Chemical mapping of a 207-nucleotide RNA with 2A3.
It was measured as part of the RMDB library M2RFPK.
2A3 adducts were read by reverse transcription with SuperScript II with manganese.

[RMDB]
RNA sequence: GGGAACGACUCGAGUAGAGUCGAAAAGGUCAUCCUUCACAGGAUCGUGUCGAAGUCCUGCUCGGGGCGGAAGCAUUAAAACCAUUCGAGCUAGUCAAUGCGUGGCGUGUCUCUCCGCAGCGUGUUGUGUAUGAGAGUGGAUUCGUCCACUCUCAAACUCGAACUGUAUGUUCGCAUACAGUUCGAGAAAAGAAACAACAACAACAAC
Reactivity to 2A3 in 0.01 (KOAc 150mM, MgCl2 10mM, bicine 150mM(pH8.5), 24C), signal-to-noise 2, nucleotides 027 to 156: g100g000u120c030a040u040c020c000u150u250c090a070c010a060g000g020a030u070c050g050u030g070u130c030g060a060a060g090u030c000c030u000g020c020u000c010g040g000g040g000c030g000g000a040a000g020c010a020u070u190a030a030a000a060c020c000a020u010u140c060g030a040g070c130u210a030g270u060c010a030a020u020g000c040g100u030g010g010c010g020u060g040u000c000u010c010u060c090c000g040c010a010g020c060g000u010g000u010u020g020u020g050u020a130u100g000a010g000a000g020u000g000g000a000u000u080c160g060u000c020c010a000c000u000c000u010c000a010a000a000

The 2A3 profile rests on 1,100 reads.